[RMDB]
RNA sequence: GGGAACGACUCGAGUAGAGUCGAAAACCAUCUAUGAUUCGUCAUAGAUGGAAAAAGAUAUGGAUCAGUGUAGACAUGAAGUUGGAUCGGAAACGAUCCAUACUUCAACAGCUACGUGAUCCUAAGUCAAAAAUGCACCGUAUUCGUACGGUGCAAACUUGAUAACCUGAUUCGUCAGGUUAUCAAGAAAAGAAACAACAACAACAAC
Reactivity to 2A3 in 0.01 (KOAc 150mM, MgCl2 10mM, bicine 150mM(pH8.5), 24C), signal-to-noise 7, nucleotides 027 to 156: c000c000a000u000c000u010a000u010g010a020u020u150c250g050u010c140a000u010a000g000a000u000g010g050a040a040a000a020a010g000a000u020a000u030g010g000a000u000c010a020g200u020g020u180a010g060a070c180a300u300g000a040a000g000u000u000g000g000a000u000c000g000g000a010a000a000c000g000a000u000c000c000a000u040a010c000u000u000c010a010a040c050a000g000c000u000a000c010g030u000g000a000u000c000c000u000a000a000g000u000c030a060a010a040a030a060u100g000c010a000c020c000g000u010a020u040u090c250g010u030a000c000g000g000u000g000c000a000a010a020
Reactivity to DMS in 0.01 (KOAc 150mM, MgCl2 10mM, bicine 150mM(pH8.5), 24C), signal-to-noise 3, nucleotides 027 to 156: c010c000a000u010c020u000a010u020g000a040u000u000c300g040u010c010a010u000a020g000a010u010g000g000a000a010a040a130a140g020a030u000a050u000g000g000a010u000c000a030g030u020g060u000a010g000a040c030a260u010g010a000a010g000u000u000g010g010a020u000c010g020g010a060a020a040c010g000a010u000c000c000a010u000a000c000u000u000c000a070a090c150a090g000c000u000a000c010g020u000g010a010u000c010c000u000a010a080g000u010c010a020a090a080a110a140u000g000c010a010c000c000g030u010a040u000u010c300g040u000a000c000g020g030u000g030c010a000a010a040
This 207-nucleotide RNA was probed chemically with 2A3 and DMS. DMS adducts were read by reverse transcription with MarathonRT. For 2A3 the reverse transcriptase was SuperScript II with manganese. The data come from the RNA Mapping Database (RMDB), library RNAMAK. For DMS, 9,349 sequencing reads were counted. The reactions ran in a buffer of 150 mM KOAc, 10 mM MgCl2 and 150 mM bicine (pH 8.5), at 24 C.